[RMDB]
RNA sequence: GGGAACGACUCGAGUAGAGUCGAAAAGAAGAAAGCACGGGACUAGAGAGUGUCCGAAAAUAAAACUCUCAAAAUAAGCGAGCGAGCGAGCGAAAGUGCGAAAGAAAGGGAGGGACCGACCGAAAGAGGGAUACUAUUUCUUCGGAAAUAGUAUCCCAAAAGAAACAACAACAACAAC
Reactivity to DMS in 0.01 (KOAc 150mM, MgCl2 10mM, bicine 150mM(pH8.5), 24C), signal-to-noise 2, nucleotides 027 to 126: g000a070a130g010a050a070a040g020c050a070c090g000g000g040a030c040u000a070g030a020g000a030g020u010g030u010c040c050g000a110a030a120a110u050a090a000a050a040c010u000c000u000c000a140a050a180a100u020a080a150g020c040g050a110g000c030g000a150g040c050g010a090g000c100g040a090a080a050g030u000g030c010g020a070a090a120g010a030a030a100g000g000g010a120g000g000g000a080c020c050g010a050c070c110g010a020a050a080g020a270
Reactivity to 2A3 in 0.01 (KOAc 150mM, MgCl2 10mM, bicine 150mM(pH8.5), 24C), signal-to-noise 1, nucleotides 027 to 126: g040a010a010g030a020a070a000g030c070a020c020g070g000g000a010c000u060a080g000a010g000a000g030u030g000u020c000c000g070a050a000a000a150u180a020a000a040a030c000u030c000u030c000a030a070a000a000u250a040a020g020c040g040a030g020c100g020a030g050c010g020a020g000c020g140a030a070a080g170u070g000c010g050a130a000a010g120a070a050a000g000g000g010a020g060g030g020a020c000c000g070a070c000c020g090a010a040a060g110a080

Conditions: 150 mM KOAc, 10 mM MgCl2 and 150 mM bicine (pH 8.5), 24 C. Chemical mapping of a 177-nucleotide RNA with DMS and 2A3. For 2A3, 1,081 sequencing reads were counted. It was measured as part of the RMDB library OK1LIB. Reactivities are given for positions 27 through 126. As a SHAPE reagent, 2A3 marks flexible, mostly unpaired nucleotides at the ribose 2'-OH.